[RMDB]
RNA sequence: GGGAACGACUCGAGUAGAGUCGAAAAGCUGCCUUUAUGGCACCCGACGCCUCGGGAUAGGCCGGGCGGGAGCUGCCAGCCCGUCCAAGCGUCGAAGCCCCCGGAGAUCCGUAAUGGAGAGAAGGGGACAUGUAGGUUACUUCGGUAACCUACAUGUAAAAGAAACAACAACAACAAC
Reactivity to DMS in 0.01 (KOAc 150mM, MgCl2 10mM, bicine 150mM(pH8.5), 24C), signal-to-noise 2, nucleotides 027 to 126: g030c200u020g040c000c000u000u000u010a090u030g030g020c000a060c000c040c000g010a050c050g000c040c050u000c210g090g020g000a050u000a040g000g000c020c070g020g000g020c020g010g000g000a100g040c100u000g020c040c010a300g000c000c000c010g010u000c010c010a100a070g020c020g010u000c000g030a120a100g010c050c000c010c010c030g000g000a290g000a030u000c000c010g010u000a140a100u030g020g000a010g020a030g000a300a160g000g000g010g000
Reactivity to 2A3 in 0.01 (KOAc 150mM, MgCl2 10mM, bicine 150mM(pH8.5), 24C), signal-to-noise 1, nucleotides 027 to 126: g040c030u030g000c020c000u090u170u180a180u270g000g000c010a010c020c030c000g000a000c000g010c000c040u130c230g110g020g000a070u050a020g050g000c000c010g130g000g000c070g030g080g000a090g090c110u090g030c010c020a010g020c000c000c000g000u000c030c000a010a010g000c000g000u000c010g020a030a030g010c010c000c000c010c040g050g000a060g030a050u010c000c000g020u150a110a100u300g010g000a030g000a000g010a050a010g010g000g010g000